[RMDB]
RNA sequence: GGGAACGACUCGAGUAGAGUCGAAAAGAUGUCAUGGAAUUCGUAAACCUUUGCUAUGCAGCGACAACACUAGCAAGAGGUCACUCUGGUGAUGCAGAUUAUCUUCUUGAACUUAUGCUCAAUGAUUAUAGCACAGCCAAGAUAGUACUUGCAGCUACAGGUGAUGAUGGUUCGCCAUCAUCACCUGAAAAGAAACAACAACAACAAC
Reactivity to 2A3 in 0.01 (KOAc 150mM, MgCl2 10mM, bicine 150mM(pH8.5), 24C), signal-to-noise 1, nucleotides 027 to 156: g030a010u090g070u110c100a050u090g060g090a040a110u260u020c050g000u220a100a140a140c040c000u010u000u100g030c010u050a120u080g000c010a070g080c010g100a080c090a190a000c000a050c070u040a040g000c030a130a000g050a000g250g040u030c000a000c030u040c000u050g020g000u050g030a100u050g000c000a000g010a050u070u110a070u110c030u080u000c000u000u010g040a020a030c020u130u000a050u230g050c020u000c130a080a060u100g070a040u030u260a020u030a090g000c030a000c050a000g020c000c000a000a000g010a060u090a030g010u010a050c030u000u000g000c030a040g000c000u080a060

Structure probing data (2A3) for a 207-nucleotide construct. The 2A3 profile rests on 466 reads. For 2A3 the reverse transcriptase was SuperScript II with manganese. Conditions: 150 mM KOAc, 10 mM MgCl2 and 150 mM bicine (pH 8.5), 24 C.